RNA sequence: GGGAACGACUCGAGUAGAGUCGAAAAGAUAUGGAUUGGCACUGCGAAGAACCUACCCACCCUAUUCGGAAACGAAUAGGAGGGGGAGCAGGCCAAUCCUAAGUCAAAACGAGGGUUCGCCCUCGAAGAUCUGCAUCAUCUUCGGAUGAUGCAGAUCAAAAGAAACAACAACAACAAC
Reactivity to 2A3 in 0.01 (KOAc 150mM, MgCl2 10mM, bicine 150mM(pH8.5), 24C), signal-to-noise 2, nucleotides 027 to 126: g000a000u000a010u050g000g000a000u000u020g000g000c050a060c300u010g000c030g060a130a110g110a280a130c030c090u090a090c050c100c000a010c000c000c000u000a000u000u000c000g000g010a010a020a010c000g000a010a010u000a010g020g000a080g000g000g000g000g040a020g030c010a010g000g000c000c010a000a000u010c000c000u000a000a000g020u030c000a020a020a110a160c040g020a020g040g020g000u080u080c240g220c030c010c000u000c000g000a000a020
Reactivity to DMS in 0.01 (KOAc 150mM, MgCl2 10mM, bicine 150mM(pH8.5), 24C), signal-to-noise 1, nucleotides 027 to 126: g010a010u010a010u040g010g010a000u010u000g000g020c020a110c020u000g010c010g000a040a090g000a160a130c300c200u020a100c000c010c000a030c040c000c000u000a010u000u000c000g000g000a010a020a010c010g010a000a020u000a000g010g000a020g000g000g000g000g000a080g000c000a030g000g000c010c010a010a010u000c000c010u000a000a050g000u010c000a140a020a150a110c030g010a040g000g010g040u010u000c300g010c000c000c000u000c000g000a070a040